[RMDB]
RNA sequence: GGGAACGACUCGAGUAGAGUCGAAAAAAAGAACUACAUGGUUCUCCAUGAAUUAAUACAUAUUGUUUAGCAAAUUCAGGAACUAUAAAACUACUACAAUGAUCUAUCGACAUACCAUCUAUCAAACAAAAUUUGGGUUUAAUUUCUCCUGGAGACGAAAUCAACUGCUUUUCGAAGCAGUUGAUUUAAAAGAAACAACAACAACAAC
Reactivity to 2A3 in 0.01 (KOAc 150mM, MgCl2 10mM, bicine 150mM(pH8.5), 24C), signal-to-noise 1, nucleotides 027 to 156: a000a000a010g070a100a020c070u300a090c020a100u160g030g000u030u050c070u000c050c000a020u020g140a170a090u170u210a140a000u110a140c020a030u300a160u030u170g010u000u070u070a020g000c000a020a170a100u000u030c030a010g010g010a080a020c000u030a050u160a200a190a020a020c020u100a000c020u000a020c090a040a120u120g030a020u010c010u100a030u050c120g170a060c130a020u090a020c000c020a030u000c020u140a020u090c030a000a170a160c030a100a160a050a070u130u080u030g000g000g000u000u010u010a060a070u050u050u050c070u010c000c000u060g000g030a060g030a050c090g040